[RMDB]
RNA sequence: GGGAACGACUCGAGUAGAGUCGAAAAAUGGAAACAGCCGCUUAUCGUGAAGCUGCAGCAUGUCAUCUUGCUAAAGCCUUACAAACAUACAGCGAGACUGGUAGUGAUCUUCUUUACCAACCACCCAAUAGGGCCCAGUUCGCUGGGCCCAAAAGAAACAACAACAACAAC
Reactivity to DMS in 0.01 (KOAc 150mM, MgCl2 10mM, bicine 150mM(pH8.5), 24C), signal-to-noise 3, nucleotides 027 to 129: a000u060g000g000a020a130a020c050a020g000c040c040g000c020u000u070a100u000c180g090u030g020a000a160g030c010u050g060c300a080g070c000a000u000g020u030c150a040u000c120u000u220g000c000u000a180a210a000g000c020c000u040u020a080c100a010a030a110c130a110u070a050c080a050g000c000g000a060g000a030c090u000g060g000u090a090g010u000g000a000u040c090u100u000c030u020u050u030a060c090c070a040a060c190c030a230c070c020c010a050a040u100a090
Reactivity to 2A3 in 0.01 (KOAc 150mM, MgCl2 10mM, bicine 150mM(pH8.5), 24C), signal-to-noise 1, nucleotides 027 to 129: a010u010g000g000a120a000a000c000a000g030c000c000g000c010u060u050a070u150c090g000u020g000a060a000g020c000u000g030c020a000g050c030a040u230g060u110c070a090u050c030u000u000g000c000u000a080a000a000g010c010c000u030u050a000c030a030a070a000c000a010u070a050c000a030g000c000g020a100g260a030c020u020g000g000u000a000g010u000g100a150u040c050u150u000c010u000u190u020a000c000c000a010a000c000c000a060c000c040c000a040a000u030a110
Source: RMDB library 15KLIB, as collected in RNAgym. The record gives the reactivity of an RNA of 170 nucleotides to DMS and 2A3. The reactions ran in a buffer of 150 mM KOAc, 10 mM MgCl2 and 150 mM bicine (pH 8.5), at 24 C. For DMS the reverse transcriptase was MarathonRT. As a SHAPE reagent, 2A3 marks flexible, mostly unpaired nucleotides at the ribose 2'-OH. Reactivities are given for positions 27 through 129. 2A3 adducts were read by reverse transcription with SuperScript II with manganese.